Chemical mapping of a 177-nucleotide RNA with 2A3 and DMS. DMS adducts were read by reverse transcription with MarathonRT.
[RMDB]
RNA sequence: GGGAACGACUCGAGUAGAGUCGAAAACGGGCUUGACUUCACGCGCGCCUCGGCAGACCGAAGACGUUGCGGCGGCGCGGCUUCGUCGCGUUGCGACGUCGCGUCGGCAAUCUUGCGCACGAGCCGACACUACUCGACCGUUCGCGGUCGAGUAGUGAAAAGAAACAACAACAACAAC
Reactivity to 2A3 in 0.01 (KOAc 150mM, MgCl2 10mM, bicine 150mM(pH8.5), 24C), signal-to-noise 1, nucleotides 027 to 126: c030g030g000g050c010u040u060g030a110c010u110u050c100a080c130g030c000g020c010g030c000c040u010c040g010g000c040a040g040a170c020c010g030a050a060g040a030c050g020u060u190g030c050g090g040c020g060g020c010g070c000g030g000c000u150u140c100g030u010c020g000c050g180u170u160g030c010g040a020c000g020u010c000g000c030g050u020c010g000g000c000a000a050u080c100u070u130g000c020g010c000a030c120g010a010g000c030c000g020a020
Reactivity to DMS in 0.01 (KOAc 150mM, MgCl2 10mM, bicine 150mM(pH8.5), 24C), signal-to-noise 2, nucleotides 027 to 126: c120g020g010g010c020u000u010g000a090c120u000u010c140a150c070g010c040g000c030g010c090c050u000c140g000g000c190a140g010a110c040c000g010a060a080g020a040c030g030u010u000g030c000g020g000c040g010g000c020g010c050g010g030c110u000u010c070g030u020c010g000c070g000u010u000g000c010g010a000c000g010u000c010g020c090g020u000c010g020g000c060a130a120u000c050u000u000g020c020g010c050a200c020g000a160g010c030c000g010a120
Values cover nucleotides 27 to 126.